[RMDB]
Structure probing data (DMS) for a 177-nucleotide construct. The data come from the RNA Mapping Database (RMDB), library OK2TST. Conditions: 150 mM KOAc, 10 mM MgCl2 and 150 mM bicine (pH 8.5), 24 C. Reactivities are given for positions 27 through 126.
RNA sequence: GGGAACGACUCGAGUAGAGUCGAAAAACGUUAGACACGGCGACUUAUGUGCCGAUCGAUGACGAUCACAAAUGGGUUGUUCUGGGGCGUACCCGCUGGGGUUAUGGUGAUGGUUUAGGCGGCAAAGCGGCCUUGAGUCAUUCGUGACUCAAGGCCGAAAAGAAACAACAACAACAAC
Reactivity to DMS in 0.01 (KOAc 150mM, MgCl2 10mM, bicine 150mM(pH8.5), 24C), signal-to-noise 1, nucleotides 027 to 126: a090c060g000u010u000a060g010a170c290a050c020g010g010c030g000a080c070u000u000a070u000g020u000g080c070c030g000a050u000c040g010a280u000g020a030c040g000a090u000c090a080c080a020a080a080u000g010g000g000u000u000g010u030u000c030u000g000g010g000g050c130g010u000a070c050c030c070g000c070u020g000g000g020g010u000u020a080u000g010g010u020g000a080u020g010g000u000u000u000a050g010g030c170g000g040c180a020a030a120g000